[RMDB]
RNA sequence: GGGAACGACUCGAGUAGAGUCGAAAAAAAUAUUAGUGGCAAUCGUAUCGUAAAACUAUGUGACUUUGGUUUGGCCACUGAUCACAACAUCGAUGGACACACCGCCAGCCGUUACGAGCACUCAGUUGUGGGCACUUUGAAGUAUAUGUCACCCGAAAACGAGAUACAGAUUCGUCUGUAUCUCGUUAAAAGAAACAACAACAACAAC
Reactivity to DMS in 0.01 (KOAc 150mM, MgCl2 10mM, bicine 150mM(pH8.5), 24C), signal-to-noise 1, nucleotides 027 to 156: a050a100a090u000a070u000u000a060g030u000g000g020c000a130a040u000c040g000u010a110u010c030g010u010a010a050a150a120c100u020a080u000g010u000g010a020c030u010u000u000g050g000u000u000u000g000g000c000c000a030c020u000g030a050u000c060a240c040a070a090c060a000u000c040g020a080u010g000g000a070c000a030c010a050c070c020g030c030c110a120g010c030c030g000u000u000a050c070g020a070g050c040a030c020u000c010a080g000u020u000g060u000g040g010g030c040a020c040u000u000u000g010a090a160g000u010a050u000a060u000g000u000c040a100c010c000c010g000a030a020
Reactivity to 2A3 in 0.01 (KOAc 150mM, MgCl2 10mM, bicine 150mM(pH8.5), 24C), signal-to-noise 1, nucleotides 027 to 156: a000a000a000u230a010u080u060a010g010u010g050g000c020a050a060u000c090g010u050a050u080c060g000u080a010a040a150a020c140u130a090u230g050u060g020a040c000u070u070u040g070g000u180u020u260g180g000c010c000a000c010u010g010a060u040c040a010c000a090a070c030a040u060c070g170a090u120g060g010a010c010a000c000a000c000c030g070c010c010a010g020c010c000g040u000u050a040c070g000a050g090c050a010c000u030c010a010g000u080u100g090u130g040g020g070c050a010c000u000u020u170g100a040a010g140u050a120u040a010u280g000u010c000a080c100c040c010g000a050a260